Source: RMDB library OK3TST, as collected in RNAgym. Chemical mapping of a 207-nucleotide RNA with 2A3. Values are in units of 0.01, from 0 to 300, in steps of 10. Values cover nucleotides 27 to 156. For 2A3, 485 sequencing reads were counted.

[RMDB]
RNA sequence: GGGAACGACUCGAGUAGAGUCGAAAAGUUGGGGAAAAGGAUCUUGCUAGAAUGCCAGCCAUUUAUAAAGAAAACUUACACACACCGAAACACACACACACACACACACACCACAGCACACACAUUCAUUUAAGCUUAAAACUAAGACCAGAGAAAGUGCUCUUUCAUACUUCGGUAUGAAAGAGCAAAAAGAAACAACAACAACAAC
Reactivity to 2A3 in 0.01 (KOAc 150mM, MgCl2 10mM, bicine 150mM(pH8.5), 24C), signal-to-noise 1, nucleotides 027 to 156: g040u030u080g000g000g010g030a000a010a000a080g050g020a050u050c030u100u150g000c000u030a080g030a210a050u020g020c010c000a000g000c010c020a040u080u160u030a150u060a070a040a010g060a020a070a020a010c060u090u180a000c010a000c000a010c010a020c090c090g020a020a130a000c080a000c040a060c020a050c000a000c020a020c040a000c030a010c000a000c030a020c020a020c030c050a030c000a000g020c010a000c000a000c000a000c000a070u000u050c020a060u120u150u030a010a000g010c000u030u010a060a160a050a030c010u090a070a040g000a050c020c070a040g080a020g090a080a020a130g300